[RMDB]
RNA sequence: GGGAACGACUCGAGUAGAGUCGAAAAAGAAUCUCCUUCGGGAGAUUCUGAACCACUUAGCUGAUUGCGGAUGACGACGAGGCAGCUCGUGUCGAGCAACCACCGAGAACAGGUUCGCCUGUUCUAACUCACCUUUCAAAUUCGUUUGAAAGGUGAGAAAAGAAACAACAACAACAAC
Reactivity to DMS in 0.01 (KOAc 150mM, MgCl2 10mM, bicine 150mM(pH8.5), 24C), signal-to-noise 5, nucleotides 027 to 126: a010g000a030a000u000c000u000c000c000u000u020c180g030g010g000a000g000a010u000u000c000u000g000a100a260c000c000a110c220u010u010a080g030c160u000g000a040u000u000g010c010g000g010a150u010g000a040c020g020a020c020g010a030g000g010c300a090g000c010u000c010g020u000g010u000c010g010a250g000c010a020a020c010c010a040c110c080g000a050g010a010a000c020a010g000g000u000u010c220g010c010c010u000g000u000u000c000u000a030a150
Reactivity to 2A3 in 0.01 (KOAc 150mM, MgCl2 10mM, bicine 150mM(pH8.5), 24C), signal-to-noise 4, nucleotides 027 to 126: a010g000a000a000u000c000u000c010c000u020u080c180g060g000g000a000g000a000u000u000c000u000g000a000a010c020c000a040c090u150u230a050g040c080u050g020a130u050u050g040c020g080g150a130u230g020a050c150g040a000c000g000a020g040g060c070a130g090c030u000c010g020u010g000u020c020g010a020g010c000a010a010c010c010a040c030c080g150a020g000a050a000c000a000g000g060u050u050c150g070c030c000u000g000u000u000c000u010a030a030